[RMDB]
RNA sequence: GGGAACGACUCGAGUAGAGUCGAAAACGCGCUCGCCAGCAACAGGCCGUUGCCGACCUCGGACAGUUCGCACUCGAGACCGACGACCUCGACGAACUCAUGUCCGAAACGGUCCAGCAGGUAGCGGUGAGUAUGCACGAUUCGUCGUGCAUACUCAAAAAGAAACAACAACAACAAC
Reactivity to DMS in 0.01 (KOAc 150mM, MgCl2 10mM, bicine 150mM(pH8.5), 24C), signal-to-noise 3, nucleotides 027 to 126: c050g010c060g010c020u000c080g090c010c020a090g010c030a120a160c280a210g010g010c050c020g030u010u010g010c070c120g010a080c130c060u000c000g000g000a030c040a030g000u000u000c000g070c300a170c250u020c010g000a030g030a030c070c040g020a110c180g000a220c130c000u000c000g000a110c020g010a000a010c000u020c250a200u010g020u030c000c020g010a010a030a030c050g000g000u000c020c070a300g000c020a040g020g010u020a040g000c010g000g010
Reactivity to 2A3 in 0.01 (KOAc 150mM, MgCl2 10mM, bicine 150mM(pH8.5), 24C), signal-to-noise 2, nucleotides 027 to 126: c000g040c010g000c020u060c110g080c030c000a010g030c010a030a040c020a090g020g000c020c000g020u000u040g130c080c070g050a100c000c020u010c000g010g010a020c010a020g020u030u000c020g000c030a100c090u010c010g020a010g010a060c070c090g150a140c080g090a080c080c010u000c010g000a020c020g010a010a010c000u030c090a170u160g000u010c000c010g000a010a000a010c030g000g000u040c040c030a020g000c000a020g010g030u020a000g010c000g010g060
The data come from the RNA Mapping Database (RMDB), library OK2TST. An RNA of 177 nucleotides, treated with DMS and 2A3 and read out base by base. 2A3 adducts were read by reverse transcription with SuperScript II with manganese. For 2A3, 2,888 sequencing reads were counted.